Notes: An RNA of 177 nucleotides, treated with DMS and 2A3 and read out base by base. For DMS, 4,022 sequencing reads were counted. 2A3 is a SHAPE reagent: it acylates the 2'-hydroxyl of flexible nucleotides of all four kinds. The reactions ran in a buffer of 150 mM KOAc, 10 mM MgCl2 and 150 mM bicine (pH 8.5), at 24 C. It was measured as part of the RMDB library OK2TST.
[RMDB]
RNA sequence: GGGAACGACUCGAGUAGAGUCGAAAAGACUCGUGCCCUGAAGCCCCGCUCUUAUUCCACAUUUUUAUGAGCGGCUGGAUGGACCUCAUUGAGGGUCCUGGCCUCUGAGGCCGCUGUCCCUGCAGGGGACCAUCGCUGUAUUCGUACAGCGAUGGUCAAAAGAAACAACAACAACAAC
Reactivity to DMS in 0.01 (KOAc 150mM, MgCl2 10mM, bicine 150mM(pH8.5), 24C), signal-to-noise 4, nucleotides 027 to 126: g000a110c060u000c020g010u000g040c010c000c010u000g010a050a080g000c030c030c020c010g010c010u010c000u000u000a080u000u000c130c180a180c210a140u000u010u010u000u010a020u020g020a010g030c010g000g010c090u000g020g010a080u000g000g010a050c000c010u010c050a200u000u010g010a130g010g000g010u000c000c030u000g000g020c010c020u010c070u000g010a150g020g000c020c010g010c110u000g020u000c010c010c000u000g020c080a090g010g000g000
Reactivity to 2A3 in 0.01 (KOAc 150mM, MgCl2 10mM, bicine 150mM(pH8.5), 24C), signal-to-noise 3, nucleotides 027 to 126: g040a010c000u000c040g060u130g000c000c010c000u030g000a070a040g010c010c010c030c000g000c000u030c000u020u150a140u160u140c140c020a160c080a290u140u090u040u080u120a070u080g000a010g000c010g010g020c020u070g150g000a020u060g010g010a010c000c020u060c070a250u070u300g100a300g030g010g010u000c000c010u000g010g000c020c010u000c050u060g120a190g030g000c030c000g030c030u030g050u060c000c000c000u000g020c050a060g000g000g040